[RMDB]
RNA sequence: GGGAACGACUCGAGUAGAGUCGAAAAUACGAGGGGAGAUGCUAGGAGUCGGGGGAAGCCAGAACGACUGGGAAAGGAAAGAAAGCAACGGGGCUAGCUGCCGGGUGUUCCAUCCAUGGGAUCGGUGAUACGGCACUGUUCGCAGUGCCGAAAAGAAACAACAACAACAAC
Reactivity to DMS in 0.01 (KOAc 150mM, MgCl2 10mM, bicine 150mM(pH8.5), 24C), signal-to-noise 3, nucleotides 027 to 129: u080a070c060g030a050g020g010g010g030a090g010a020u030g020c080u040a040g060g000a100g020u020c070g040g050g000g000g000a000a000g010c040c090a050g020a120a120c000g040a160c080u080g010g020g050a060a020a060g030g050a040a000a060g010a060a040a070g050c090a080a060c170g020g040g010g000c000u000a160g000c090u040g030c060c040g000g020g050u060g030u000u050c010c010a050u040c000c080a160u080g010g040g000a020u030c100g000g030u050g020a050u060a120
Reactivity to 2A3 in 0.01 (KOAc 150mM, MgCl2 10mM, bicine 150mM(pH8.5), 24C), signal-to-noise 2, nucleotides 027 to 129: u210a000c030g020a010g000g000g000g000a030g020a030u060g020c030u060a010g040g000a040g010u040c020g000g000g000g000g000a000a000g030c000c010a000g020a100a030c090g030a030c000u030g000g010g000a010a010a010g050g030a070a040a000g020a010a080a000g020c030a020a030c040g000g010g000g040c000u040a070g000c020u030g000c000c010g000g000g010u010g050u070u040c060c020a030u000c040c000a100u100g080g030g000a040u060c090g050g000u060g000a040u050a140

This 170-nucleotide RNA was probed chemically with DMS and 2A3. It was measured as part of the RMDB library 15KLIB. 2A3 adducts were read by reverse transcription with SuperScript II with manganese. The RNA was probed in 150 mM KOAc, 10 mM MgCl2 and 150 mM bicine (pH 8.5) at 24 C. Reactivities are given for positions 27 through 129.